Description: Chemical mapping of a 177-nucleotide RNA with DMS and 2A3. The RNA was probed in 150 mM KOAc, 10 mM MgCl2 and 150 mM bicine (pH 8.5) at 24 C. Values are in units of 0.01, from 0 to 300, in steps of 10.
RNA sequence: GGGAACGACUCGAGUAGAGUCGAAAAACUGCGGUAUUCGUACCGCAGUACAUAAAAAGGAUAAAAUACCAGUAGCCCGAAACGCAAGCGAGCACUACUGGGGCAAGAACCACUUCGGUGGUUCUAAACACAGCAACUAGUUCGCUAGUUGCUGUGUAAAAGAAACAACAACAACAAC
Reactivity to DMS in 0.01 (KOAc 150mM, MgCl2 10mM, bicine 150mM(pH8.5), 24C), signal-to-noise 2, nucleotides 027 to 126: a050c000u000g000c000g000g010u000a000u010u020c150g000u010a010c040c010g020c000a010g010u030a030c190a070u010a030a020a100a130a120g000g000a090u030a080a060a100a210u010a070c020c000a010g000u000a000g060c110c120c040g010a050a070a050c110g010c280a100a090g020c080g000a100g010c210a120c030u010a000c030u000g000g000g000g030c190a120a010g010a010a000c000c000a020c000u000u010c150g070g000u000g010g000u000u000c000u000a070a060
Reactivity to 2A3 in 0.01 (KOAc 150mM, MgCl2 10mM, bicine 150mM(pH8.5), 24C), signal-to-noise 2, nucleotides 027 to 126: a000c020u020g010c000g000g000u000a020u020u040c160g040u030a020c010c000g000c000a010g000u020a000c000a020u250a000a210a010a020a000g120g000a080u200a260a170a090a000u200a220c020c020a030g000u000a000g000c010c020c010g090a170a130a000c080g010c060a080a070g130c020g180a050g040c020a000c070u000a000c000u010g040g000g050g030c070a040a000g000a000a010c020c020a000c020u040u030c180g110g000u000g000g000u010u020c000u000a000a030